Overview: This 207-nucleotide RNA was probed chemically with 2A3 and DMS.
RNA sequence: GGGAACGACUCGAGUAGAGUCGAAAAUGCAAGUGGUGCUAUUGUUGGAAUCACCGUACCUAUUUAGGUUUACGCUCCAAGAUCGGUGGAUAGCAGCCCUAUCAAUAUCUAGGAGAACUGUGCUAUGAAAACGGUAUUGGCUUCGGCCAAUACCGAAUCACACAUACAUGUUCGCAUGUAUGUGUGAAAAAGAAACAACAACAACAAC
Reactivity to 2A3 in 0.01 (KOAc 150mM, MgCl2 10mM, bicine 150mM(pH8.5), 24C), signal-to-noise 4, nucleotides 027 to 156: u130g010c040a060a030g050u030g110g020u030g030c030u030a030u060u080g150u070u080g050g070a090a070u140c000a020c000c000g030u030a020c000c000u050a160u140u210u240a050g000g010u020u050u050a040c040g010c020u020c010c010a010a000g020a060u050c050g010g060u050g020g040a020u010a020g020c060a020g000c000c030c010u080a090u110c040a060a050u030a020u190c030u010a030g000g000a020g010a040a020c040u060g020u050g100c020u070a040u220g110a100a060a020a040c020g020g000u000a000u000u000g010g000c000u040u050c240g060g000c010c000a000a000u000a000c000c000g000a000a000
Reactivity to DMS in 0.01 (KOAc 150mM, MgCl2 10mM, bicine 150mM(pH8.5), 24C), signal-to-noise 3, nucleotides 027 to 156: u010g030c070a140a110g020u010g010g020u000g020c020u000a030u000u000g020u000u000g000g010a090a080u010c000a050c030c010g010u000a070c030c010u000a260u000u010u010a080g030g010u010u010u000a080c060g000c030u000c020c040a050a090g030a070u000c090g030g040u010g020g000a100u000a050g020c040a180g010c120c070c000u000a070u000c020a070a150u000a090u000c100u000a120g000g030a060g010a040a110c060u000g010u000g010c040u000a110u010g000a060a040a110a150c020g030g020u000a010u000u000g010g010c020u000u000c300g070g020c000c000a020a020u000a000c000c000g010a010a030
Reactivities are rounded to 0.1 and cut off at 0 and 3. For 2A3, 3,350 sequencing reads were counted. DMS adducts were read by reverse transcription with MarathonRT.